[RMDB]
RNA sequence: GGGAACGACUCGAGUAGAGUCGAAAAUUGAACGGAUUCGUCCGUUCAACGCGUGCGAUCGAAACGUAGUACAAAAGUACAGACGAAAGCACAAGGAUCAAAUGAUACAGCCGUUCGCGGCUGUAAAUUGAGACUGUAUUUUCGAAUACAGUCUCAAAAAAGAAACAACAACAACAAC
Reactivity to 2A3 in 0.01 (KOAc 150mM, MgCl2 10mM, bicine 150mM(pH8.5), 24C), signal-to-noise 3, nucleotides 027 to 126: u010u020g000a000a010c010g000g010a000u040u040c170g070u000c030c000g000u000u020c000a010a000c020g030c020g000u010g020c000g000a040u020c020g030a010a090a130c110g060u090a080g030u030a070c040a050a300a030a040g010u010a010c000a020g080a040c010g000a020a010a000g020c020a010c000a030a050g100g010a110u130c060a030a070a130u190g050a030u030a060c000a010g000c020c000g020u060u150c280g020c010g110g000c000u000g000u010a000a000a010
Reactivity to DMS in 0.01 (KOAc 150mM, MgCl2 10mM, bicine 150mM(pH8.5), 24C), signal-to-noise 6, nucleotides 027 to 126: u000u000g010a000a000c000g010g000a030u000u010c210g020u000c000c000g010u000u000c010a010a020c120g010c250g000u000g000c010g000a250u000c020g010a040a100a150c130g010u000a080g010u000a060c090a100a070a080a110g020u000a020c010a060g010a210c010g000a020a030a290g000c000a010c000a080a220g000g000a110u000c100a060a070a080u000g000a250u000a020c010a010g000c000c000g020u000u010c210g030c010g010g000c010u000g000u000a000a050a190
The record gives the reactivity of an RNA of 177 nucleotides to 2A3 and DMS. In probing experiments dimethyl sulfate is read out at A N1 and C N3, which are open when not base-paired. 2A3 adducts were read by reverse transcription with SuperScript II with manganese. Conditions: 150 mM KOAc, 10 mM MgCl2 and 150 mM bicine (pH 8.5), 24 C. For DMS, 5,394 sequencing reads were counted. Source: RMDB library M2PK50, as collected in RNAgym. The 2A3 profile rests on 2,733 reads.